RNA sequence: GGGAACGACUCGAGUAGAGUCGAAAAGCCGUGCUCGAGAGGGAGCAGAAAAUGCAGAGCUAUCCCGUCGUUUCGCUAAACAAAUGCGAAACGACAAAUUCCGUUACAUACGCAAUCCUCUAAUGAAGGAUAGGACGAUAUUCGUAUCGUCCUAUCCAAAAGAAACAACAACAACAAC
Reactivity to 2A3 in 0.01 (KOAc 150mM, MgCl2 10mM, bicine 150mM(pH8.5), 24C), signal-to-noise 3, nucleotides 027 to 126: g020c000c000g050u040g010c000u020c020g080a050g000a010g050g050g020a010g010c020a000g150a010a150a020a020u200g010c050a010g020a020g060c010u020a060u100c000c000c010g000u010c000g000u010u000u000c000g000c020u070a190a220a120c070a040a100a020u100g000c000g000a000a010a010c000g000a010c010a020a030a010u090u010c020c010g030u070u090a100c020a100u160a060c050g020c060a010a120u050c010c000u020c010u070a080a130u190g110a180a040
Reactivity to DMS in 0.01 (KOAc 150mM, MgCl2 10mM, bicine 150mM(pH8.5), 24C), signal-to-noise 2, nucleotides 027 to 126: g020c010c000g040u030g020c010u000c030g010a070g030a050g000g020g000a060g000c000a060g000a080a060a100a080u000g020c120a160g010a160g010c030u010a110u000c010c020c050g010u010c000g010u000u010u000c010g040c000u020a050a060a190c300a070a050a050u010g000c010g010a000a000a000c010g010a000c000a040a020a090u010u010c100c040g000u000u000a060c110a070u000a080c110g020c090a040a060u000c000c000u000c000u000a120a110u010g010a140a090